[RMDB]
RNA sequence: GGGAACGACUCGAGUAGAGUCGAAAACAAUCAACAAUAUGGUUUGUGUAGUUAUGCUGAAAAUCGUUGAGGUUGUAUGGAAUAGGUUAACCGUAAGACCUUAAGUUGCAAAACUUUAAAAUUAAUCAAAAUCAUGUACACUUCGGUGUACAUGAAACUGUGCAUUUACCUUCGGGUAAAUGCACAGAAAAGAAACAACAACAACAAC
Reactivity to 2A3 in 0.01 (KOAc 150mM, MgCl2 10mM, bicine 150mM(pH8.5), 24C), signal-to-noise 2, nucleotides 027 to 156: c020a000a060u100c000a000a070c050a130a040u040a060u210g010g100u020u070u010g130u010g000u020a050g070u060u140a070u100g020c050u110g080a010a000a040a080u110c040g000u000u030g030a010g030g010u010u020g010u010a080u060g010g020a080a060u020a110g020g010u000u010a040a060c000c000g030u010a150a000g010a000c010c000u000u000a010a000g010u000u010g070c020a000a200a000a000c010u150u100u300a030a080a010a060u170u290a060a060u130c060a040a070a000a200u020c000a000u000g000u000a010c000a000c000u050u050c190g060g000u000g000u000a000c010a000u000g000a000a000a000

Record summary
Chemical mapping of a 207-nucleotide RNA with 2A3. The data come from the RNA Mapping Database (RMDB), library M2RFPK. The RNA was probed in 150 mM KOAc, 10 mM MgCl2 and 150 mM bicine (pH 8.5) at 24 C.